[RMDB]
RNA sequence: GGGAACGACUCGAGUAGAGUCGAAAAUCAGGUAAACAAUUUACAUGCAGGAUCUCUAGAAGCCUGUUGAAACGGCAAUGUUAUUAUAUUUCAAAGUGUGAUGAUAUGCGACACAAUUCAGAGAUAGCCACUAGCAUUAGUUCGCUAAUGCUAGUGGAAAAGAAACAACAACAACAAC
Reactivity to DMS in 0.01 (KOAc 150mM, MgCl2 10mM, bicine 150mM(pH8.5), 24C), signal-to-noise 3, nucleotides 027 to 126: u050c020a030g010g000u030a070a060a130c170a050a080u040u060u010a070c050a080u020g010c120a050g030g010a050u000c010u030c060u000a080g010a070a050g000c150c070u010g000u010u000g010a050a070a060c170g000g020c060a030a060u000g000u000u000a030u040u010a040u010a010u010u000u000c210a080a060a140g000u010g030u000g000a010u020g010a030u020a010u020g010c040g000a110c030a010c080a010a140u000u010c050a040g010a060g000a010u010a060g030
Reactivity to 2A3 in 0.01 (KOAc 150mM, MgCl2 10mM, bicine 150mM(pH8.5), 24C), signal-to-noise 7, nucleotides 027 to 126: u080c010a000g050g100u160a110a080a070c080a130a100u090u180u260a120c080a060u230g070c000a010g000g150a060u060c030u010c000u090a100g050a110a030g070c000c040u060g020u050u060g050a110a070a010c050g050g010c020a030a050u040g040u010u010a020u010u040a070u020a070u030u150u150c160a150a120a040g040u030g030u020g030a020u000g000a010u040a040u130g030c030g060a010c010a000c010a110a130u140u120c030a010g000a010g000a040u030a050g060
The record gives the reactivity of an RNA of 177 nucleotides to DMS and 2A3. The reactions ran in a buffer of 150 mM KOAc, 10 mM MgCl2 and 150 mM bicine (pH 8.5), at 24 C. DMS adducts were read by reverse transcription with MarathonRT.